[RMDB]
RNA sequence: GGGAACGACUCGAGUAGAGUCGAAAAGCUAGAAGGUUCGCCUUCUAGCAAAGAAAGCGGAAAACACCGAUAUAAAACGGUGAGGGCCGCAACCACCCAUAAAAAGGAUCAACUUCGGUUGAUCCAACUAGAAUCUUUACUUCGGUAAAGAUUCUAGAAAAGAAACAACAACAACAAC
Reactivity to DMS in 0.01 (KOAc 150mM, MgCl2 10mM, bicine 150mM(pH8.5), 24C), signal-to-noise 1, nucleotides 027 to 126: g010c000u010a030g010a050a000g000g020u010u020c190g020c020c020u010u000c010u000a010g000c000a010a030a130g000a100a120a150g030c000g000g010a020a050a100a080c000a000c010c000g010a120u000a090u010a080a140a140a140c000g010g010u000g000a110g010g000g010c000c000g090c000a110a040c060c130a120c020c010c000a070u050a000a020a050a110a100g000g020a030u000c000a030a000c000u000u020c090g050g000u000u000g000a010u000c000c000a030a030
Reactivity to 2A3 in 0.01 (KOAc 150mM, MgCl2 10mM, bicine 150mM(pH8.5), 24C), signal-to-noise 2, nucleotides 027 to 126: g000c000u010a000g000a020a010g020g030u070u150c140g060c020c000u010u010c000u000a000g000c000a000a010a010g000a010a010a000g000c010g000g010a000a010a090a000c000a000c020c000g020a010u050a010u040a290a150a020a050c000g000g000u000g020a040g040g100g010c010c000g050c010a000a010c000c050a020c000c000c000a030u230a070a110a030a000a000g000g000a020u000c000a000a010c000u050u130c300g080g000u010u000g000a010u000c000c000a000a000
Notes
The data come from the RNA Mapping Database (RMDB), library M2PK50. The record gives the reactivity of an RNA of 177 nucleotides to DMS and 2A3. For 2A3, 2,031 sequencing reads were counted. Reactivities are given for positions 27 through 126.